About this RNA: Structure probing data (DMS and 2A3) for a 177-nucleotide construct. For DMS the reverse transcriptase was MarathonRT. For 2A3 the reverse transcriptase was SuperScript II with manganese. The data come from the RNA Mapping Database (RMDB), libraries RFM100 and RFMREP. Conditions: 150 mM KOAc, 10 mM MgCl2 and 150 mM bicine (pH 8.5), 24 C.
[RMDB]
RNA sequence: GGGAACGACUCGAGUAGAGUCGAAAAGUAAUUGUGCUGAUAUCAAUAUCAGGGAAGAACAUACCAUAUAGAGGUGUCAAGUACACCGAACGAUCGUGGUGCUCCCUCAGCCACGGGCGUGCUUGGAUCUAUAGAGGUGCUUCGGCACCUCUAUAGAAAAAGAAACAACAACAACAAC
Reactivity to DMS in 0.01 (KOAc 150mM, MgCl2 10mM, bicine 150mM(pH8.5), 24C), signal-to-noise 5, nucleotides 027 to 126: g030u030a060a090u020u010g010u010g010c010u000g010a020u000a070u020c200a100a100u010a010u010c050a040g010g020g000a090a110g010a100a080c090a120u010a150c030c040a050u020a100u020a060g000a190g000g020u010g000u000c030a060a060g020u020a030c010a020c050c030g010a080a030c060g010a020u000c010g010u000g000g020u000g000c120u010c010c000c000u020c040a300g020c020c020a030c020g000g000g000c010g020u000g000c100u020u010g000g000a190
Reactivity to 2A3 in 0.01 (KOAc 150mM, MgCl2 10mM, bicine 150mM(pH8.5), 24C), signal-to-noise 4, nucleotides 027 to 126: g070u100a040a150u130u120g030u060g040c010u010g010a000u000a060u150c170a200a070u080a000u110c000a030g060g060g070a100a030g070a100a020c030a050u170a110c040c060a030u120a020u060a090g090a050g000g000u010g020u020c070a150a110g070u110a070c010a000c030c000g000a000a000c000g000a020u020c010g010u000g000g020u070g010c000u110c010c000c030u010c020a000g020c000c000a010c000g020g010g000c000g010u040g020c060u040u060g040g010a040